Structure probing data (DMS) for a 177-nucleotide construct. Values are in units of 0.01, from 0 to 300, in steps of 10. Values cover nucleotides 27 to 126.

[RMDB]
RNA sequence: GGGAACGACUCGAGUAGAGUCGAAAAAAGUGGCCCACGGCGACGGUUUGCAAGGUUCCAGCUUUAACUAUGGUUUCGGCGCACAUAGCGACCUUGAAUGGAUUGAAGCGGCGGCGGAUGUGGUGAACCCAAAGUAACCAUUCGUGGUUACUUUGGGAAAAGAAACAACAACAACAAC
Reactivity to DMS in 0.01 (KOAc 150mM, MgCl2 10mM, bicine 150mM(pH8.5), 24C), signal-to-noise 2, nucleotides 027 to 126: a040a060g010u010g010g000c040c010c040a090c090g020g020c030g020a040c090g010g000u000u000u020g010c070a070a060g010g020u000u000c040c030a090g010c050u000u010u010a100a070c070u000a030u010g000g010u000u010u000c070g020g010c050g010c080a090c090a060u000a090g010c070g020a040c030c020u000u020g010a060a120u000g020g000a090u000u010g020a080a120g010c070g000g010c070g020g020c050g000g010a040u000g010u000g000g020u000g030a090a160

Background
The data come from the RNA Mapping Database (RMDB), library OK2TST. The RNA was probed in 150 mM KOAc, 10 mM MgCl2 and 150 mM bicine (pH 8.5) at 24 C. For DMS the reverse transcriptase was MarathonRT.